[RMDB]
RNA sequence: GGGAACGACUCGAGUAGAGUCGAAAAACUGCAUCUACGGAUGCAGAACUACGUUCAUCCAAUUUAUUUGGACGCAUGAAAUGAGAAUAGGGAACGGGAUUCUCAUACGCAGGCUACGGCCUGCCAAAAAACUCCUUAUGCUUCGGCAUAAGGAGAACCUUGUAUAUGAGUUCGCUCAUAUACAAGGAAAAGAAACAACAACAACAAC
Reactivity to DMS in 0.01 (KOAc 150mM, MgCl2 10mM, bicine 150mM(pH8.5), 24C), signal-to-noise 3, nucleotides 027 to 156: a150c000u010g000c000a000u000c010u000a120c300g140g000a040u010g010c000a020g010a040a100c010u000a010c000g000u000u000c020a090u010c070c120a100a160u000u000u000a140u020u010u000g040g010a010c000g020c020a080u000g000a080a140a110u000g000a090g000a050a110u000a160g010g000g010a070a080c060g010g000g000a300u000u000c010u000c000a060u000a070c110g020c000a010g010g020c010u000a090c290g070g000c000c000u000g000c000c010a000a030a050a110a010a030c010u010c000c000u000u000a020u000g030c000u000u000c300g030g050c000a010u000a000a010g010g000a020g000a010a010
Reactivity to 2A3 in 0.01 (KOAc 150mM, MgCl2 10mM, bicine 150mM(pH8.5), 24C), signal-to-noise 6, nucleotides 027 to 156: a000c000u000g000c000a000u010c000u030a050c230g120g000a000u000g000c000a000g000a000a000c030u100a030c010g000u000u010c010a010u000c010c000a020a020u110u170u130a160u150u100u060g000g010a000c000g020c040a040u130g090a130a190a050u010g000a020g010a010a010u010a010g040g020g010a000a010c010g000g000g010a000u000u000c000u000c010a010u040a060c070g000c000a010g010g000c000u030a070c210g090g000c010c000u000g000c000c000a010a050a000a010a010a070c000u000c000c000u000u000a000u000g000c000u030u040c140g090g000c010a000u000a000a000g000g000a000g000a000a000
Chemical mapping of a 207-nucleotide RNA with DMS and 2A3. Reactivities are given for positions 27 through 156. It was measured as part of the RMDB library M2RFOK. High 2A3 reactivity points to a flexible backbone, as in loops and unpaired stretches. DMS adducts were read by reverse transcription with MarathonRT.